Conditions: 150 mM KOAc, 10 mM MgCl2 and 150 mM bicine (pH 8.5), 24 C. Chemical mapping of a 207-nucleotide RNA with 2A3 and DMS.

RNA sequence: GGGAACGACUCGAGUAGAGUCGAAAAGGGGUCACCUCGGACCGAGGUGCUGACAUGAUCUGAAGCCUCCACGGAUCAACAGCAGCACUACCCACCGGUCCGAGGUGACGGAGGCACCCAAAACCCGUGAUUUUAUGAUUCGUCAUAAAAUCACGGGCAUGUUAUUGUGUUUCGACACAAUAACAUGAAAAGAAACAACAACAACAAC
Reactivity to 2A3 in 0.01 (KOAc 150mM, MgCl2 10mM, bicine 150mM(pH8.5), 24C), signal-to-noise 3, nucleotides 027 to 156: g100g010g010g010u010c000a000c000c000u010c000g010g000a000c010c000g010a070g000g030u010g000c000u000g030a090c070a240u250g000a000u000c000u010g020a110a010g030c000c000u000c000c000a030c020g010g000a000u030c020a080a050c060a080g210c000a000g000c000a000c010u080a080c080c100c030a060c050c030g010g000u000c010c000g000a000g000g000u000g000a000c000g000g000a000g000g000c000a040c000c000c010a040a060a040a070c000c000c000g010u000g000a000u000u030u000u000a000u010g000a030u030u120c260g100u010c090a000u000a000a000a010a010u000c000a000c000g000g000g010
Reactivity to DMS in 0.01 (KOAc 150mM, MgCl2 10mM, bicine 150mM(pH8.5), 24C), signal-to-noise 1, nucleotides 027 to 156: g000g010g000g000u000c010a040c000c000u000c000g010g000a050c010c010g020a110g010g040u010g000c020u020g010a160c100a300u000g000a050u000c010u020g010a070a280g020c070c020u010c040c010a300c050g050g010a020u000c000a090a090c080a170g030c000a020g000c010a030c010u000a060c060c010c030a300c070c020g000g020u000c000c010g040a010g020g070u000g020a010c030g020g000a020g080g070c050a070c030c000c000a020a060a160a210c000c000c000g050u000g020a020u000u000u000u010a000u010g000a050u000u010c300g000u000c010a000u010a000a000a020a000u000c000a000c010g000g000g000
For DMS the reverse transcriptase was MarathonRT.